[RMDB]
RNA sequence: GGGAACGACUCGAGUAGAGUCGAAAAGCAGAUGCAGUGUGUGAGGACACUGAAUCUCGCGGGUAGUAGACUUCCUCACAAGUCGUCUGUGAUUCUGACCCGAGUCAGGACCACACUACCGACGUACUCGGGUAUGUCAGACGCGAGCAUCUGAGGACACUUCAUUGUUCUUCGGAACAAUGAAGUGAAAAGAAACAACAACAACAAC
Reactivity to DMS in 0.01 (KOAc 150mM, MgCl2 10mM, bicine 150mM(pH8.5), 24C), signal-to-noise 2, nucleotides 027 to 156: g010c020a050g000a050u000g000c000a040g030u000g030u010g030u050g020a200g020g020a200c040a050c000u050g010a030a020u000c000u000c070g100c050g000g050g000u010a040g000u000a110g010a000c020u000u010c010c020u010c050a040c010a070a130g020u000c000g030u000c030u000g020u010g010a100u000u010c050u000g020a070c040c130c180g020a170g000u000c040a080g000g010a080c030c050a110c040a150c020u000a020c140c000g060a030c040g010u000a060c040u010c050g020g030g040u000a030u010g010u010c040a080g000a060c000g020c040g000a110g020c080a060u000c020u000g000a120g030g050a300
Reactivity to 2A3 in 0.01 (KOAc 150mM, MgCl2 10mM, bicine 150mM(pH8.5), 24C), signal-to-noise 3, nucleotides 027 to 156: g010c010a010g010a010u010g040c000a020g000u000g010u010g020u070g080a030g030g030a010c020a000c030u010g010a040a050u060c020u030c070g020c020g010g040g030u080a050g030u010a010g010a010c000u020u010c000c010u000c000a000c000a000a020g070u000c010g000u000c020u020g040u040g040a100u160u000c020u080g060a040c010c000c040g020a020g000u020c030a030g010g040a030c030c020a050c010a030c020u090a060c000c000g060a030c040g010u050a020c000u020c070g080g020g010u020a000u060g060u010c020a010g000a030c000g000c000g000a010g010c030a020u000c020u030g000a020g020g040a010
Structure probing data (DMS and 2A3) for a 207-nucleotide construct. It was measured as part of the RMDB library OK3TST.